[RMDB]
RNA sequence: GGGAACGACUCGAGUAGAGUCGAAAAGGGAAGCAAUUCAGCACAGUAAGCCGCCCGUGCAGAGGCGAAGCGGAAGACCCAGCUGUUUAAGGAGGACGGAAUAGUGACUGGUAUGUCGACUCCACUCCUGUUACAGCCGAUUCGUCGGCUGUAACAGAAAAGAAACAACAACAACAAC
Reactivity to 2A3 in 0.01 (KOAc 150mM, MgCl2 10mM, bicine 150mM(pH8.5), 24C), signal-to-noise 3, nucleotides 027 to 126: g040g000g010a020a030g060c040a020a080u130u050c030a020g030c030a030c050a020g050u110a070a020g010c000c000g000c050c010c010g000u090g040c020a010g080a040g060g000c000g050a020a000g000c020g030g050a030a030g030a030c010c000c010a010g010c010u030g070u110u130u170a040a010g010g030a000g040g020a030c090g040g060a100a030u110a150g050u030g050a040c030u070g130g010u240a130u220g010u010c000g010a010c020u000c000c000a000c040u030c010
Reactivity to DMS in 0.01 (KOAc 150mM, MgCl2 10mM, bicine 150mM(pH8.5), 24C), signal-to-noise 3, nucleotides 027 to 126: g000g000g020a140a030g000c100a100a060u020u020c050a050g030c010a050c030a140g010u030a060a060g030c020c000g020c050c020c030g000u030g020c110a080g010a160g000g000c010g020a110a180g000c030g000g000a090a040g000a160c030c020c010a090g000c000u000g010u000u030u020a100a030g010g000a060g000g000a180c200g010g000a050a050u030a070g010u020g000a040c020u000g000g020u020a070u030g010u000c010g000a120c040u000c010c010a070c010u000c030